[RMDB]
RNA sequence: GGGAACGACUCGAGUAGAGUCGAAAAGCACAGGCAUAGCUGUUUCCGGUGAGCCGGCGGUCGUCAAGGUGACACUAGCCGACACGGGCUCCGAUCACAUGGCGAAGGAUCUGGGUUUGGGCAACCAUGGUGGGGACAAGAGAAUGGCGACGCUGAACUUUAGACCACUAUUCGUAGUGGUCUAAAGAAAAGAAACAACAACAACAAC
Reactivity to DMS in 0.01 (KOAc 150mM, MgCl2 10mM, bicine 150mM(pH8.5), 24C), signal-to-noise 1, nucleotides 027 to 156: g000c040a040c010a070g020g000c000a100u000a130g000c030u000g010u000u000u010c030c040g000g000u000g000a210g040c010c010g030g040c020g010g000u000c040g020u000c010a100a140g020g010u010g000a100c070a070c110u000a100g050c030c010g020a070c080a110c060g010g000g000c030u000c000c060g020a180u020c010a060c050a110u000g030g010c080g020a060a130g000g000a050u000c080u010g010g020g010u000u000u000g020g010g010c040a040a130c030c040a020u000g030g020u000g000g000g010g020a070c020a050a130g010a130g000a010a070u000g000g000c020g000a070c050g030c020u010g000a080a180
Reactivity to 2A3 in 0.01 (KOAc 150mM, MgCl2 10mM, bicine 150mM(pH8.5), 24C), signal-to-noise 3, nucleotides 027 to 156: g000c010a020c010a030g040g000c050a080u060a050g030c040u030g040u050u070u040c030c020g010g010u060g010a030g040c030c010g040g020c040g020g080u030c040g030u000c060a110a150g100g000u080g080a020c040a040c080u080a040g000c030c010g030a050c030a030c090g080g010g000c020u060c020c030g010a020u030c020a020c030a110u060g040g000c070g040a030a050g050g010a050u020c030u080g000g030g030u080u070u080g020g020g000c020a050a050c020c020a080u080g020g030u060g020g040g000g000a010c040a070a070g070a010g050a030a080u080g000g020c020g010a010c030g010c060u030g040a020a010
An RNA of 207 nucleotides, treated with DMS and 2A3 and read out base by base.
2A3 adducts were read by reverse transcription with SuperScript II with manganese.
The reactions ran in a buffer of 150 mM KOAc, 10 mM MgCl2 and 150 mM bicine (pH 8.5), at 24 C.
DMS adducts were read by reverse transcription with MarathonRT.